[RMDB]
RNA sequence: GGGAACGACUCGAGUAGAGUCGAAAACAGAACUGGUUUGCGGGGGCUGACAGUACCGGCGGUAUUCUCAACUUUGUGACCAAACGGGCGCUGUGUGAAGGUGAGGGCUCCAAAAUGUCAUGGACCCAUUAUGUAGGAGUUUCGACUCCUACAUAAUAAAAGAAACAACAACAACAAC
Reactivity to 2A3 in 0.01 (KOAc 150mM, MgCl2 10mM, bicine 150mM(pH8.5), 24C), signal-to-noise 4, nucleotides 027 to 126: c030a010g050a070a040c060u080g070g060u100u110u190g060c040g010g050g000g050g010c030u030g020a010c010a020g030u050a040c000c010g040g010c050g020g010u040a060u120u040c060u020c010a040a130c040u150u140u120g060u080g030a040c010c010a150a020a030c040g010g020g010c040g000c010u030g030u030g020u040g110a040a010g020g000u050g030a060g000g000g000c020u040c020c010a030a080a050a090u120g020u040c020a040u070g020g030a050c000c000c000
Reactivity to DMS in 0.01 (KOAc 150mM, MgCl2 10mM, bicine 150mM(pH8.5), 24C), signal-to-noise 9, nucleotides 027 to 126: c080a100g010a110a110c080u000g010g010u000u000u000g020c050g020g010g000g010g010c070u000g010a050c080a050g010u000a060c070c030g010g010c130g010g010u000a030u010u000c080u000c030a070a090c110u000u000u010g020u010g010a080c070c040a030a080a100c130g010g000g010c080g010c040u000g000u000g010u000g010a080a080g010g000u000g010a100g010g000g010c090u000c020c030a030a030a070a100u010g010u010c070a090u000g010g000a120c020c010c030